[RMDB]
RNA sequence: GGGAACGACUCGAGUAGAGUCGAAAAGUAAAUCAAAAUAAGAGAGGUAAUGUCUGAGAAUAGAAUGGUUUCGAAUUUGUCCUAUUGGCACUGGUUAACCGUAAUUACCACCACCAAAAUAAAAAAACCUAGACAAUAUGUUCGCAUAUUGUCUAGGAAAAGAAACAACAACAACAAC
Reactivity to DMS in 0.01 (KOAc 150mM, MgCl2 10mM, bicine 150mM(pH8.5), 24C), signal-to-noise 2, nucleotides 027 to 126: g000u000a040a080a080u020c020a050a060a150a060u010a110a080g000a100g010a040g010g000u000a050a060u010g010u010c030u000g000a130g000a100a120u000a030g000a080a050u000g000g000u000u000u000c100g030a080a140u000u030u000g030u010c010c000u010a110u000u000g000g000c040a050c120u000g000g010u000u000a040a040c110c040g000u000a020a050u000u000a050c010c020a080c240c050a060c050c030a040a060a150a100u020a050a040a080a050a050a090a120
Reactivity to 2A3 in 0.01 (KOAc 150mM, MgCl2 10mM, bicine 150mM(pH8.5), 24C), signal-to-noise 2, nucleotides 027 to 126: g080u070a000a120a150u090c040a010a030a110a100u250a270a040g050a000g020a030g070g010u020a080a000u020g020u020c060u080g100a080g030a220a130u130a100g040a030a020u070g010g060u030u000u000c050g000a050a090u000u030u110g030u060c020c040u040a070u080u090g040g000c050a040c060u030g030g040u060u060a020a000c010c000g040u020a010a040u020u070a040c020c010a000c000c010a010c010c030a050a050a040a090u270a050a200a050a000a020a000a000
Chemical mapping of a 177-nucleotide RNA with DMS and 2A3.
The reactions ran in a buffer of 150 mM KOAc, 10 mM MgCl2 and 150 mM bicine (pH 8.5), at 24 C.
The DMS profile rests on 1,009 reads.
For 2A3, 996 sequencing reads were counted.
Values cover nucleotides 27 to 126.